RNA sequence: GGGAACGACUCGAGUAGAGUCGAAAAGAUAUGGAUGUAUAACAGUGUGGCUGCUUUUGACGAGCAUCACAUCGGAAACGAUGUACGUGAUGCUCGAUAAGCAGCACACUGUUAUACAUCCUAAGUCCCUGUAACAUGUGUUCGCACAUGUUACAGGAAAAGAAACAACAACAACAAC
Reactivity to DMS in 0.01 (KOAc 150mM, MgCl2 10mM, bicine 150mM(pH8.5), 24C), signal-to-noise 2, nucleotides 027 to 126: g020a140u000a300u000g000g010a010u000g030u000a000u000a000a000c000a010g060u000g000u010g020g000c000u000g000c020u020u000u010u000g010a300c150g000a000g010c020a000u000c010a040c010a060u000c000g000g000a160a100a220c000g030a020u000g010u000a100c300g050u000g000a010u000g010c000u000c010g000a030u000a020a020g010c000a010g010c010a020c000a000c000u010g010u000u000a000u000a000c000a000u020c000c000u010a010a050g010u000c040

Conditions: 150 mM KOAc, 10 mM MgCl2 and 150 mM bicine (pH 8.5), 24 C. The record gives the reactivity of an RNA of 177 nucleotides to DMS. DMS adducts were read by reverse transcription with MarathonRT. It was measured as part of the RMDB library TTRINS. Values cover nucleotides 27 to 126. The DMS profile rests on 2,291 reads.